[RMDB]
RNA sequence: GGGAACGACUCGAGUAGAGUCGAAAAAUUACGAAGUAUCGGCAAGUUCCGCAGACGGUGGCGAGUUCCUCGGUGUAAACCUCUACGAUGUUGCGAGUGGCGAACCCGUUGCCCUCGCGGGCGACGACUGUGAGGUUCGCGUUGAAGUCUCGGAGCAGACCUACAACUAUUUCGAUAGUUGUAGGUCAAAAGAAACAACAACAACAAC
Reactivity to 2A3 in 0.01 (KOAc 150mM, MgCl2 10mM, bicine 150mM(pH8.5), 24C), signal-to-noise 1, nucleotides 027 to 156: a030u160u120a050c020g030a150a020g110u120a100u170c050g050g070c150a000a130g020u020u000c020c000g070c110a000g000a000c060g010g020u120g030g010c000g000a000g010u030u060c000c020u020c030g020g000u080g060u050a080a120a030c010c010u000c000u120a160c030g020a010u150g100u230u110g090c050g010a040g020u000g000g000c000g000a050a060c030c010c000g010u000u010g010c000c000c030u080c080g060c060g000g000g030c000g000a040c000g050a070c120u250g130u160g080a020g000g000u000u000c000g000c000g020u000u040g050a060a000g010u000c000u000c000g010g000a000g020c030a000
Reactivity to DMS in 0.01 (KOAc 150mM, MgCl2 10mM, bicine 150mM(pH8.5), 24C), signal-to-noise 1, nucleotides 027 to 156: a080u010u020a230c040g010a060a180g000u000a070u010c030g010g000c060a090a110g010u000u000c030c030g040c090a090g010a030c020g030g030u030g030g000c010g010a110g000u000u000c030c000u010c000g000g000u000g000u000a060a090a030c000c030u000c050u000a110c050g010a230u010g000u010u010g020c020g010a120g060u000g000g040c000g030a040a050c020c000c010g010u000u000g010c000c020c000u000c190g060c300g010g000g010c010g020a030c040g020a110c160u000g030u010g020a070g030g020u000u000c000g030c050g030u000u020g000a120a260g000u010c000u020c020g000g000a040g040c040a300